[RMDB]
The data come from the RNA Mapping Database (RMDB), library M2RFPK. The record gives the reactivity of an RNA of 207 nucleotides to 2A3. The reactions ran in a buffer of 150 mM KOAc, 10 mM MgCl2 and 150 mM bicine (pH 8.5), at 24 C. For 2A3 the reverse transcriptase was SuperScript II with manganese.
RNA sequence: GGGAACGACUCGAGUAGAGUCGAAAAGAAAGAAAGAAAGAACUCUGUAAUGUGAGGGAUUGCCUGGACCAGGUCGGCGGGCCUGCUCCAGUUUCCUUCGCUCUGCUCAACGGGCAGACCGCCACAAAAAACGCGUGGCUGUUCGCAGCCACGCGAACAUUAUCAAUCUCUUCGGAGAUUGAUAAUGAAAAGAAACAACAACAACAAC
Reactivity to 2A3 in 0.01 (KOAc 150mM, MgCl2 10mM, bicine 150mM(pH8.5), 24C), signal-to-noise 2, nucleotides 027 to 156: g050a030a060a010g070a040a050a020g060a030a080a010g070a050a020c050u100c100u130g090u200a090a140u110g010u040g050a010g000g030g000a010u030u250g120c030c010u000g000g000a000c000c010a000g000g000u030c060g040g050c030g030g000g000c000c000u010g000c000u000c000c010a010g020u010u050u010c010c000u010u010c010g000c020u050c010u010g020c000u010c050a130a090c130g020g040g000c020a010g030a060c010c010g030c020c000a070c050a030a160a040a030a020a010c010g000c010g000u000g010g010c000u010g020u040u060c130g010c090a000g000c000c000a020c000g010c010g000a010a000